[RMDB]
RNA sequence: GGGAACGACUCGAGUAGAGUCGAAAAACAGUCAGUACGCUGACUGAGGGAAACGGGAGCCGGGCUUGGGACAAGAGCCAUCCCAAGUCCAAGGCCAAGUAGGCUCUAGUGAUAGUACGCCAUCACAAAAACUGGUCUACCUUCGGGUAGACCAGAAGUUUAAAGGCACGUUCGCGUGCCUUUAAACAAAAGAAACAACAACAACAAC
Reactivity to 2A3 in 0.01 (KOAc 150mM, MgCl2 10mM, bicine 150mM(pH8.5), 24C), signal-to-noise 2, nucleotides 027 to 156: a000c000a000g000u000c010a010g040u060a070c200g010c140u020g010a000c000u000g000a040g020g040g030a070a180a160c120g000g090g020a110g040c020c110g000g000g030c000u000u000g030g000g000a000c040a080a070g010a020g020c000c000a050u000c010c000c000a000a000g000u000c000c010a070a050g030g000c050c010a070a060g040u110a090g060g030c000u010c010u020a050g000u010g020a030u020a020g070u030a050c120g060c060c010a030u000c020a020c010a020a030a040a020a030c020u000g000g000u010c000u000a000c010c000u020u040c120g110g000g000u000a000g020a000c000c000a020g000a000a010
This 207-nucleotide RNA was probed chemically with 2A3. Values cover nucleotides 27 to 156. The reactions ran in a buffer of 150 mM KOAc, 10 mM MgCl2 and 150 mM bicine (pH 8.5), at 24 C.